Source information: An RNA of 207 nucleotides, treated with 2A3 and DMS and read out base by base.
RNA sequence: GGGAACGACUCGAGUAGAGUCGAAAAGCAGUUUCGCCUUCAGCUUCAAGUUCGGCAAUUACGUCGGCUUUCAUUCCAUCCUGAAGUGUGAGGAAUGCCCGAUCAUCAACAACAUAUAGAAUGUGUAUCACCGCGUCACGUCGAGACGCAAUAUCAAUGUUCUAGCAAAGUUCGCUUUGCUAGAACAAAAAGAAACAACAACAACAAC
Reactivity to 2A3 in 0.01 (KOAc 150mM, MgCl2 10mM, bicine 150mM(pH8.5), 24C), signal-to-noise 5, nucleotides 027 to 156: g080c040a030g030u020u060u120c040g000c000c000u060u040c020a040g020c040u130u080c150a090a070g010u210u300c030g020g000c050a150a210u250u160a120c110g010u020c010g020g000c000u080u040u050c040a090u150u030c070c020a100u100c010c020u030g040a080a050g030u100g040u080g190a050g050g050a100a040u040g040c000c020c020g040a080u130c000a050u080c000a020a090c010a060a000c030a060u160a020u080a190g290a200a070u060g070u020g050u110a100u170c060a040c120c080g010c000g000u000c000a030c200g150u120c120g070a030g000a060c010g010c020a010a020u110a030u050c030a020a110
Reactivity to DMS in 0.01 (KOAc 150mM, MgCl2 10mM, bicine 150mM(pH8.5), 24C), signal-to-noise 2, nucleotides 027 to 156: g000c010a060g010u000u000u000c070g000c020c020u050u000c020a030g030c030u000u000c050a050a100g020u000u000c010g040g000c030a110a260u010u000a150c190g010u000c010g040g020c060u000u000u000c090a170u010u000c160c070a110u010c060c020u000g000a080a040g040u000g040u000g000a140g000g000a070a090u010g000c050c010c030g000a110u000c050a150u000c050a030a080c020a080a010c100a050u010a180u000a140g000a090a300u000g030u000g030u000a150u000c050a130c030c100g010c000g010u020c020a110c070g040u000c080g010a180g010a030c020g010c010a040a020u000a100u010c090a040a160
Conditions: 150 mM KOAc, 10 mM MgCl2 and 150 mM bicine (pH 8.5), 24 C. The 2A3 profile rests on 2,232 reads. For DMS, 2,348 sequencing reads were counted.